[RMDB]
RNA sequence: GGGAACGACUCGAGUAGAGUCGAAAAAUGAAGCUGAAGCCGUGGCUGAGGCUGAAGCCGUACGUGCAGCAUUACCUCCACUUCUGCCGGAGGUCGAUAAGGAGACCGUAGAGGCUGACAUCGACCUUCAGUCUAGGCAAUUCGUUGCCUAGACUGAAAAAGAAACAACAACAACAAC
Reactivity to DMS in 0.01 (KOAc 150mM, MgCl2 10mM, bicine 150mM(pH8.5), 24C), signal-to-noise 2, nucleotides 027 to 126: a080u010g030a140a090g010c010u000g010a270a080g010c020c060g030u000g040g000c020u000g020a300g000g000c010u000g000a120a050g040c010c060g020u010a060c090g010u000g030c020a030g000c030a100u000u010a090c070c010u000c040c020a060c170u010u000c030u000g000c060c030g010g030a040g000g010u000c020g000a040u010a100a110g000g000a210g010a100c010c020g010u000a180g010a260g010g010c020u000g020a080c100a030u010c000g020a060c050c020u020

The data come from the RNA Mapping Database (RMDB), library OK2TRN. This 177-nucleotide RNA was probed chemically with DMS. DMS adducts were read by reverse transcription with MarathonRT. For DMS, 1,301 sequencing reads were counted.